[RMDB]
RNA sequence: GGGAACGACUCGAGUAGAGUCGAAAAGAAAGAAAUCACUAAUCGGAUCAAAGCGGAUUGAAUGUAACUGAGCAAUGAGUUCUACGAAUAACUCGUAGUGAGUGAUCCAAUAUCCGUAUUAGAGAAAGGGAAUGUUUGUGUUCGCACAAACAUUCCCAAAAGAAACAACAACAACAAC
Reactivity to 2A3 in 0.01 (KOAc 150mM, MgCl2 10mM, bicine 150mM(pH8.5), 24C), signal-to-noise 1, nucleotides 027 to 126: g040a010a010a010g110a000a070a000u040c000a000c110u030a000a000u000c080g000g000a000u010c210a210a000a000g130c040g000g000a000u000u090g100a100a010u100g000u130a070a070c000u090g000a090g000c070a030a160u190g030a040g090u010u000c000u010a040c040g000a000a150u090a300a070c070u070c060g010u040a010g000u020g280a040g000u030g000a000u000c000c050a000a030u090a000u000c000c000g110u100a000u000u000a030g050a030g080a070a010a010
This 177-nucleotide RNA was probed chemically with 2A3. Values are in units of 0.01, from 0 to 300, in steps of 10. The reactions ran in a buffer of 150 mM KOAc, 10 mM MgCl2 and 150 mM bicine (pH 8.5), at 24 C. It was measured as part of the RMDB library OK1LIB. The 2A3 profile rests on 787 reads.